[RMDB]
RNA sequence: GGGAACGACUCGAGUAGAGUCGAAAACUACUGGCAAUCAUCUGGGCCAAUUAUAACUACCCUCCAAAGGUUAAAGGUAUGUCACCUGAGGACAAAUGUCAGGCUUUAACUACCCAUCUACUCCAAAGCUGUGUAGCCUAUUCGUAGGCUACACAGCAAAAGAAACAACAACAACAAC
Reactivity to DMS in 0.01 (KOAc 150mM, MgCl2 10mM, bicine 150mM(pH8.5), 24C), signal-to-noise 1, nucleotides 027 to 126: c010u020a000c040u000g000g000c020a120a150u060c020a170u000c010u090g000g070g090c130c050a060a000u000u050a000u070a090a080c080u000a070c020c020c000u000c070c100a000a150a100g000g000u000u020a000a170a070g000g070u070a000u010g020u000c000a060c000c000u000g030a290g010g060a010c050a020a140a160u120g060u000c050a000g000g000c020u050u000u000a000a090c100u000a030c000c000c020a170u000c060u000a030c100u090c040c150a100a060a290
Reactivity to 2A3 in 0.01 (KOAc 150mM, MgCl2 10mM, bicine 150mM(pH8.5), 24C), signal-to-noise 1, nucleotides 027 to 126: c010u080a040c020u020g000g000c030a060a150u060c020a130u070c110u100g000g020g000c020c000a040a090u140u080a050u050a090a060c100u090a070c020c000c010u010c020c010a040a010a020g020g000u080u110a060a100a010g090g030u120a100u220g110u040c030a000c040c010u030g010a040g030g000a020c060a030a080a030u140g030u050c030a000g000g050c000u050u060u100a130a140c090u130a080c000c000c000a070u000c040u110a040c020u000c010c010a070a020a100

Structure probing data (DMS and 2A3) for a 177-nucleotide construct. For DMS the reverse transcriptase was MarathonRT. The RNA was probed in 150 mM KOAc, 10 mM MgCl2 and 150 mM bicine (pH 8.5) at 24 C.